[RMDB]
RNA sequence: GGGAACGACUCGAGUAGAGUCGAAAAUGAAAGAGUUUCGUUUAACCUAUAUGGAAGCAAAGAUCAAGAAUACAACCUUCCCAUAUGGUUGACUUAAUUAUUCCCUAGGUUCCUGGAAGCUAAAAAACGUAUAGUGCACAUUCGUGUGCACUAUACGAAAAGAAACAACAACAACAAC
Reactivity to 2A3 in 0.01 (KOAc 150mM, MgCl2 10mM, bicine 150mM(pH8.5), 24C), signal-to-noise 2, nucleotides 027 to 126: u200g070a030a020a050g150a000g000u000u030u050c000g000u030u030u110a000a000c000c020u030a030u010a020u070g000g020a000a020g030c100a160a060a030g060a080u100c080a070a110g120a300a030u160a140c070a040a020c010c010u010u010c000c060c020a010u000a010u030g020g000u000u000g010a000c010u010u010a020a010u030u040a020u030u030c010c010c000u010a090g050g040u030u010c010c020u020g090g110a100a030g010c100u160a170a090a020a040a020a000
Reactivity to DMS in 0.01 (KOAc 150mM, MgCl2 10mM, bicine 150mM(pH8.5), 24C), signal-to-noise 2, nucleotides 027 to 126: u010g010a070a140a090g000a020g020u000u000u000c060g000u000u010u000a000a020c000c010u010a020u010a010u010g000g000a030a040g000c070a050a160a130g010a080u020c090a060a150g000a100a070u000a130c070a140a100c300c000u010u000c100c030c050a040u000a010u010g000g000u000u000g000a000c010u010u000a020a050u010u000a080u000u000c000c000c030u010a100g010g000u000u000c030c040u000g010g040a090a080g010c090u000a000a020a070a050a070a110
An RNA of 177 nucleotides, treated with 2A3 and DMS and read out base by base. The DMS profile rests on 1,214 reads. It was measured as part of the RMDB library M2PK90.